[RMDB]
RNA sequence: GGGAACGACUCGAGUAGAGUCGAAAAGAUAUGGAUUCACUACCCACCUCCGCAAGGUUGAUGACCGACAGGCUUUCGGAAACGAAAGCCUGUCGCAAGACCAACCGGAGAGGUGAAUCCUAAGUCACCAUAAUAAUUGGUUCGCCAAUUAUUAUGGAAAAGAAACAACAACAACAAC
Reactivity to 2A3 in 0.01 (KOAc 150mM, MgCl2 10mM, bicine 150mM(pH8.5), 24C), signal-to-noise 2, nucleotides 027 to 126: g110a090u300a270u300g000g000a020u010u020c020a060c030u300a300c000c000c000a030c000c010u000c010c000g020c040a100a090g030g000u000u020g040a300u120g070a090c000c100g000a000c000a010g010g060c040u000u030u000c000g040g040a150a170a130c020g000a030a000a010g060c030c030u000g010u010c010g000c000a020a000g000a010c010c000a000a010c040c010g010g010a000g020a000g000g020u010g000a000a000u000c000c000u000a040a060g140u140c080a040
Reactivity to DMS in 0.01 (KOAc 150mM, MgCl2 10mM, bicine 150mM(pH8.5), 24C), signal-to-noise 3, nucleotides 027 to 126: g010a110u000a210u010g000g000a000u000u000c010a030c020u010a260c040c010c010a300c150c000u000c020c010g010c030a050a300g000g000u000u000g000a290u010g020a260c300c010g010a030c010a040g010g000c000u000u000u000c000g000g000a080a060a270c000g000a000a030a030g010c010c000u010g000u020c000g030c030a040a140g020a020c010c010a010a300c300c000g000g000a020g010a090g010g000u000g000a020a000u000c000c000u000a040a060g010u020c090a180
The record gives the reactivity of an RNA of 177 nucleotides to 2A3 and DMS.
For 2A3 the reverse transcriptase was SuperScript II with manganese.
Conditions: 150 mM KOAc, 10 mM MgCl2 and 150 mM bicine (pH 8.5), 24 C.
For DMS, 1,550 sequencing reads were counted.